[RMDB]
RNA sequence: GGGAACGACUCGAGUAGAGUCGAAAAUCUUAACCUUGUUCGUGAAUACUAUCAUCAAUAUAGUCAUAGCUAGUCGAGUGCUCCGUGAGCGGCUAACCAAUUCACCGUGUGCCGCAUUUAUAGGUGAAACUAGUGUAAGUUUCGACUUACACUAGUUAAAAGAAACAACAACAACAAC
Reactivity to DMS in 0.01 (KOAc 150mM, MgCl2 10mM, bicine 150mM(pH8.5), 24C), signal-to-noise 9, nucleotides 027 to 126: u010c060u000u010a100a130c110c060u000u010g020u000u000c070g020u010g000a110a090u010a100c050u000a040u000c090a200u010c130a070a070u010a090u000a050g010u000c080a070u000a100g010c030u000a040g010u000c020g000a070g010u000g010c030u000c030c030g030u010g010a110g010c020g000g010c020u000a080a100c110c100a050a090u000u000c040a020c030c030g010u000g020u000g010c010c010g010c030a070u000u000u000a090u010a060g000g020u000g000a070
Reactivity to 2A3 in 0.01 (KOAc 150mM, MgCl2 10mM, bicine 150mM(pH8.5), 24C), signal-to-noise 6, nucleotides 027 to 126: u010c010u060u090a080a070c010c010u030u070g080u110u080c040g010u040g110a050a050u080a130c020u050a030u070c060a030u050c030a130a040u140a020u020a190g030u030c020a040u040a080g020c010u020a020g100u050c020g020a010g070u050g030c010u020c020c000g050u030g040a030g000c020g020g000c010u020a060a070c040c020a040a110u060u040c030a020c030c000g020u020g060u070g070c010c010g020c010a000u010u030u020a180u090a020g060g010u040g050a070